[RMDB]
RNA sequence: GGGAACGACUCGAGUAGAGUCGAAAAACUGUGACACUGUCAUCAAAACAAUGUGCUUCUAUUACUCCAGACAGAUUCUUCAAAGGGCUUGUGAAACACAAUAUCAGUAAGAGAUUGAGCACACUCAAUACCUUAGAUUUUAUACUUUUCCUCCGAGGCUAAAAAUGGUAUUCGUACCAUUUUUAGCAAAAGAAACAACAACAACAAC
Reactivity to DMS in 0.01 (KOAc 150mM, MgCl2 10mM, bicine 150mM(pH8.5), 24C), signal-to-noise 2, nucleotides 027 to 156: a020c020u010g020u020g010a080c030a100c040u020g030u000c050a140u010c110a120a080a140a110c090a080a090u000g010u000g010c010u000u020c000u000a130u000u000a090c020u000c020c030a070g020a230c060a110g000a140u000u000c040u000u000c070a080a140a100g020g020g000c050u000u000g010u000g000a070a070a080c070a050c060a100a070u010a120u000c020a070g010u000a020a100g010a070g000a140u000u000g020a050g050c090a080c090a090c040u010c010a030a070u010a080c020c010u000u000a090g000a080u000u000u010u000a060u010a050c040u010u000u000u000c010c010u010c030c020g000a240g000
Reactivity to 2A3 in 0.01 (KOAc 150mM, MgCl2 10mM, bicine 150mM(pH8.5), 24C), signal-to-noise 5, nucleotides 027 to 156: a000c060u080g050u070g090a020c070a030c170u110g010u080c020a100u030c030a050a080a030a110c040a030a140u060g020u030g020c000u030u050c010u050a130u110u080a100c000u020c020c010a010g010a020c010a030g080a210u100u020c040u100u070c050a110a100a040g020g010g010c020u080u130g030u040g060a060a080a000c040a000c010a050a040u050a030u120c020a020g080u060a090a010g040a000g000a070u030u040g010a020g000c060a010c010a050c050u040c010a050a030u070a150c010c010u030u050a010g010a050u010u050u080u030a070u090a090c020u050u080u050u060c000c010u040c020c050g030a030g140

The record gives the reactivity of an RNA of 207 nucleotides to DMS and 2A3. 2A3 adducts were read by reverse transcription with SuperScript II with manganese. For DMS, 3,244 sequencing reads were counted. Source: RMDB library OK3TST, as collected in RNAgym. The RNA was probed in 150 mM KOAc, 10 mM MgCl2 and 150 mM bicine (pH 8.5) at 24 C.